[RMDB]
RNA sequence: GGGAACGACUCGAGUAGAGUCGAAAAAGUCUGUUGUCUCAAGGAUUGGAGACUCCAUCUUUACAGGCUGUACUGGCUCUUGGAACAAGGUCACUCAAAUUGCUAACAUGUUCUUGGAACAGACUCAGCCACUCUGUUAGUUCGCUAACAGAGUGGCAAAAGAAACAACAACAACAAC
Reactivity to DMS in 0.01 (KOAc 150mM, MgCl2 10mM, bicine 150mM(pH8.5), 24C), signal-to-noise 2, nucleotides 027 to 126: a040g000u000c030u000g000u000u000g010u020c010u010c020a150a040g020g000a110u000u010g010g010a120g000a070c110u000c040c050a050u000c020u000u000u000a090c080a080g020g000c030u020g020u010a070c070u000g020g000c080u000c030u000u020g000g020a030a020c050a050a070g000g030u000c180a050c120u000c090a050a050a200u000u000g000c090u000a090a050c110a060u000g000u000u000c000u000u010g000g000a030a000c020a000g000a080c070u010c090a240
Reactivity to 2A3 in 0.01 (KOAc 150mM, MgCl2 10mM, bicine 150mM(pH8.5), 24C), signal-to-noise 2, nucleotides 027 to 126: a000g000u000c020u000g060u050u040g070u010c030u000c010a040a070g090g050a170u130u250g070g020a090g030a040c030u010c030c020a070u010c020u050u050u040a020c010a010g030g010c020u000g070u100a070c050u000g040g000c010u000c000u020u040g030g000a070a000c010a050a050g100g010u080c050a040c030u080c020a050a150a270u220u140g070c020u050a090a030c020a060u040g000u020u030c000u030u030g020g000a000a000c010a030g030a170c000u000c080a010